[RMDB]
RNA sequence: GGGAACGACUCGAGUAGAGUCGAAAAGGUCUUAGGUCAGCCAUGAGAACAACGGUAACUCUCAUGGUUGUCACAGAGAUGUGACGACGCUGACCAUCUAAGUUACCGCUUGUUAGAUGCUAAGACAGUAUUAUGCCAGUUUCGACUGGCAUAAUACAAAAGAAACAACAACAACAAC
Reactivity to DMS in 0.01 (KOAc 150mM, MgCl2 10mM, bicine 150mM(pH8.5), 24C), signal-to-noise 5, nucleotides 027 to 126: g030g000u000c000u000u000a020g010g020u000c050a150g020c130c060a110u020g010a140g000a030a020c020a010a030c020g000g000u000a010a020c030u010c060u000c110a020u000g000g000u000u000g010u000c000a000c000a000g000a230g000a200u000g010u000g000a010c000g010a060c220g020c250u010g000a040c120c020a020u000c090u000a040a020g010u000u000a010c000c000g000c210u000u000g010u000u000a090g000a010u000g000c010u000a010a010g020a020c020a160
Reactivity to 2A3 in 0.01 (KOAc 150mM, MgCl2 10mM, bicine 150mM(pH8.5), 24C), signal-to-noise 4, nucleotides 027 to 126: g100g000u000c010u010u030a030g020g020u070c050a050g100c120c030a090u140g070a050g060a160a000c020a020a010c010g020g000u020a010a010c010u030c010u010c050a030u060g020g000u000u050g000u000c000a000c000a000g040a010g010a060u010g000u010g000a000c050g020a040c100g080c290u110g020a020c030c000a010u010c030u050a030a010g000u000u010a010c020c000g010c060u010u010g020u010u010a060g010a020u060g130c010u010a020a000g000a000c030a020